[RMDB]
RNA sequence: GGGAACGACUCGAGUAGAGUCGAAAAAAGGUUGUGAACUAUGCUUGAGGAAGGCGAAGCCAGGGGAAACUCUGGUGGAGGCUUGUCGCAAUGCUGACGUGCAAAUCGCUUGUCUAACUUGAGUAUAUAUUCAAAAGAUGUUCGCAUCUUUUGAAUAAAAAGAAACAACAACAACAAC
Reactivity to DMS in 0.01 (KOAc 150mM, MgCl2 10mM, bicine 150mM(pH8.5), 24C), signal-to-noise 4, nucleotides 027 to 126: a080a030g000g000u000u000g010u010g000a100a100c140u010a040u000g010c000u000u000g000a030g010g000a150a030g020g030c010g000a180a280g000c010c000a020g020g000g000g010a180a070a160c000u000c010u000g000g010u000g000g020a210g000g000c020u010u000g020u000c080g000c040a100a060u030g010c070u010g030a070c070g010u010g000c060a030a050a080u000c050g010c090u010u010g010u020c060u020a060a220c030u000u000g000a020g010u000a030u000a020
Reactivity to 2A3 in 0.01 (KOAc 150mM, MgCl2 10mM, bicine 150mM(pH8.5), 24C), signal-to-noise 7, nucleotides 027 to 126: a010a010g150g000u040u020g010u020g030a080a030c030u010a010u050g010c000u000u010g010a010g000g030a110a040g040g020c010g020a020a000g000c000c000a010g040g000g000g000a060a050a040c000u000c000u000g010g000u020g010g010a020g030g010c010u020u060g030u040c010g000c060a110a180u270g050c110u140g030a040c050g060u080g010c030a030a040a130u090c040g010c060u050u100g040u060c030u040a050a070c000u040u020g000a000g020u000a010u000a000